[RMDB]
RNA sequence: GGGAACGACUCGAGUAGAGUCGAAAAGAUAUGGACGGUCCAUUCACCGACGAUCUCGGAAACGAGGGAGGUGUUAUGGAGCCGUCCUAAGUCACAAGUGAGCGCAUACUUCGGUAUGCGCUCACAACAACUAACUACAGUUCGCUGUAGUUAGUUGAAAAGAAACAACAACAACAAC
Reactivity to DMS in 0.01 (KOAc 150mM, MgCl2 10mM, bicine 150mM(pH8.5), 24C), signal-to-noise 8, nucleotides 027 to 126: g010a050u000a300u010g000g000a010c000g010g010u000c000c000a010u000u000c010a010c000c000g010a080c260g010a020u010c000u000c000g000g000a140a110a210c010g010a020g000g000g000a020g010g020u000g010u010u000a000u000g010g000a040g010c000c000g010u000c000c000u000a000a070g000u010c040a120c190a110a130g010u000g000a010g010c000g000c000a010u000a010c000u000u010c210g030g010u000a000u000g000c000g010c000u000c000a000c000a010a140
Reactivity to 2A3 in 0.01 (KOAc 150mM, MgCl2 10mM, bicine 150mM(pH8.5), 24C), signal-to-noise 2, nucleotides 027 to 126: g030a000u080a020u080g000g000a010c010g000g030u010c020c000a010u000u000c000a010c000c010g210a300c020g020a080u010c000u000c020g020g070a110a080a080c020g000a000g000g000g020a000g010g000u020g030u110u050a030u010g000g010a010g010c010c010g000u000c000c000u000a000a000g010u000c000a100c070a270a300g020u010g020a000g010c000g000c000a020u020a010c030u090u170c300g070g000u000a010u010g000c000g010c000u010c000a010c000a000a000